[RMDB]
This 170-nucleotide RNA was probed chemically with 2A3 and DMS. The DMS profile rests on 63,033 reads. The reactions ran in a buffer of 150 mM KOAc, 10 mM MgCl2 and 150 mM bicine (pH 8.5), at 24 C. For DMS the reverse transcriptase was MarathonRT.
RNA sequence: GGGAACGACUCGAGUAGAGUCGAAAAGAUUUACCUACGGGAAUCCCUGGGUUCCUCUGAUGUCCAGUCCCUCUCCCGUCCGAGUGAAGGGAGACUCCGGAACUCCAGUCAUUUGAGGGACGAAUCCAACGUUAGAUGUUCGCAUCUAACAAAAGAAACAACAACAACAAC
Reactivity to 2A3 in 0.01 (KOAc 150mM, MgCl2 10mM, bicine 150mM(pH8.5), 24C), signal-to-noise 9, nucleotides 027 to 129: g030a010u090u110u230a190c000c010u030a050c160g040g010g030a040a070u050c030c010c000u050g080g020g000u010u010c010c000u010c030u050g050a050u050g030u030c040c030a010g010u000c000c000c000u010c000u000c000c010c000g040u010c020c020g200a130g060u290g050a030a030g010g010g000a030g010a010c040u040c050c030g020g030a070a050c000u010c020c020a020g030u010c010a040u020u040u090g020a010g000g000g000a000c010g010a020a020u040c050c040a050a020c090
Reactivity to DMS in 0.01 (KOAc 150mM, MgCl2 10mM, bicine 150mM(pH8.5), 24C), signal-to-noise 9, nucleotides 027 to 129: g020a100u040u050u080a090c020c020u020a050c150g000g000g070a100a050u000c010c020c050u030g020g010g010u000u010c000c000u030c060u030g010a060u040g040u040c010c080a040g000u000c020c010c030u030c000u000c030c020c020g030u040c030c050g070a130g040u070g000a050a050g000g000g000a040g020a050c090u050c100c110g000g000a120a060c030u010c030c090a080g020u000c050a050u010u020u030g020a010g000g020g030a030c040g030a100a070u050c030c090a060a100c190
Source information
Values are in units of 0.01, from 0 to 300, in steps of 10. It was measured as part of the RMDB library 15KLIB.